[RMDB]
RNA sequence: GGGAACGACUCGAGUAGAGUCGAAAACAGUCUCACAGACUCACACUGUGUCUGUGACUCACAGACACUGAGUCACUCUCUCACAGUGAGAGUGUCAGACUCAGACUGAGACUCUGUCUCUGACUGAGCCGUCAGAUCUUUUCGAAGAUCUGACGGCAAAAGAAACAACAACAACAAC
Reactivity to DMS in 0.01 (KOAc 150mM, MgCl2 10mM, bicine 150mM(pH8.5), 24C), signal-to-noise 2, nucleotides 027 to 126: c090a080g000u000c070u020c100a130c080a050g010a140c030u000c010a100c090a070c220u000g000u030g000u000c040u020g000u020g000a030c130u000c000a070c050a100g000a050c170a100c160u000g000a030g010u010c030a060c020u000c010u000c040u000c040a100c120a110g010u000g000a000g000a010g000u000g000u000c070a050g000a080c000u000c000a070g000a180c090u010g000a070g000a060c120u000c080u000g020u000c030u000c010u000g000a050c000u000g020a100
Reactivity to 2A3 in 0.01 (KOAc 150mM, MgCl2 10mM, bicine 150mM(pH8.5), 24C), signal-to-noise 2, nucleotides 027 to 126: c040a010g050u000c020u000c020a050c020a030g070a050c000u020c020a020c010a020c080u090g030u000g020u000c020u020g040u020g080a090c040u010c050a040c010a030g210a080c030a020c110u050g020a000g020u020c010a010c010u040c020u010c010u000c000a060c030a170g100u070g110a000g000a000g010u020g050u070c050a010g010a030c000u000c020a030g040a070c030u040g020a000g010a030c070u040c070u230g050u000c010u000c020u050g030a030c010u000g020a020